The data come from the RNA Mapping Database (RMDB), library 15KREP. Chemical mapping of a 177-nucleotide RNA with DMS and 2A3. The reactions ran in a buffer of 150 mM KOAc, 10 mM MgCl2 and 150 mM bicine (pH 8.5), at 24 C. For DMS the reverse transcriptase was MarathonRT. The 2A3 profile rests on 1,422 reads.
RNA sequence: GGGAACGACUCGAGUAGAGUCGAAAAGAGGUCUUCCGCGUCUUUUCUUGCUUGGAUCCAUUUCUCGAGGACGUCCUCCCUUCCUCCCCUCCGGGUCCUCUUCGUCUCGGACUGGCUCAUCUUCGGACAGUAUGAUUGACUUCGGUCAAUCAUACUGAAAAGAAACAACAACAACAAC
Reactivity to DMS in 0.01 (KOAc 150mM, MgCl2 10mM, bicine 150mM(pH8.5), 24C), signal-to-noise 1, nucleotides 027 to 126: g020a050g030g020u000c100u020u000c130c080g030c040g010u000c010u000u010u010u010c010u010u000g010c080u000u000g000g000a090u010c070c080a080u010u000u000c010u000c030g000a060g030g010a140c070g010u000c020c010u010c000c020c040u000u000c000c000u010c020c000c000c010u010c020c020g000g020g010u000c020c040u000c060u000u000c090g030u000c020u010c030g020g000a110c090u000g000g020c020u010c040a130u000c050u020u010c040g010g000a250
Reactivity to 2A3 in 0.01 (KOAc 150mM, MgCl2 10mM, bicine 150mM(pH8.5), 24C), signal-to-noise 1, nucleotides 027 to 126: g070a020g010g060u080c100u150u040c090c070g080c090g160u020c010u020u030u000u020c030u070u120g070c000u000u060g060g060a100u120c080c030a100u070u030u070c060u010c000g030a050g010g050a100c040g040u040c010c010u000c000c000c010u030u050c000c010u000c000c010c000c000u000c010c000g020g050g000u000c000c030u050c000u100u110c030g030u000c010u000c020g040g000a030c020u020g020g000c010u040c040a100u030c040u020u010c000g010g020a010